[RMDB]
RNA sequence: GGGAACGACUCGAGUAGAGUCGAAAAAUCCAGUUGCUAUCAGAGAUUACAAGUCAGUGGGUGUCUCCAUUAGUGUGGAUCCCUGCCUUUCUGCAGAUAUCUCAGGCACUCCCAGGAUCAAAGGAGUUCCCAGAACUGGAACUUGCAAAGAGGGAACGUAUUGAGCGACGUUCGCGUCGCUCAAUACAAAAGAAACAACAACAACAAC
Reactivity to 2A3 in 0.01 (KOAc 150mM, MgCl2 10mM, bicine 150mM(pH8.5), 24C), signal-to-noise 2, nucleotides 027 to 156: a000u000c010c000a000g020u020u060g030c020u080a060u300c090a030g020a020g020a060u100u090a110c020a190a050g050u090c000a070g020u120g000g070g020u060g060u000c070u030c020c010a070u050u220a150g180u150g010u070g190g010a040u040c030c000c000u020g000c010c000u100u080u070c060u150g030c010a010g020a130u020a010u080c000u020c010a020g010g010c030a010c000u010c000c020c000a040g080g060a190u130c170a070a050a110g030g030a050g000u030u050c060c060c030a000g030a050a040c050u080g070g000a010a030c010u070u160g050c070a030a040a000g130a060g000g040g040a040a000c040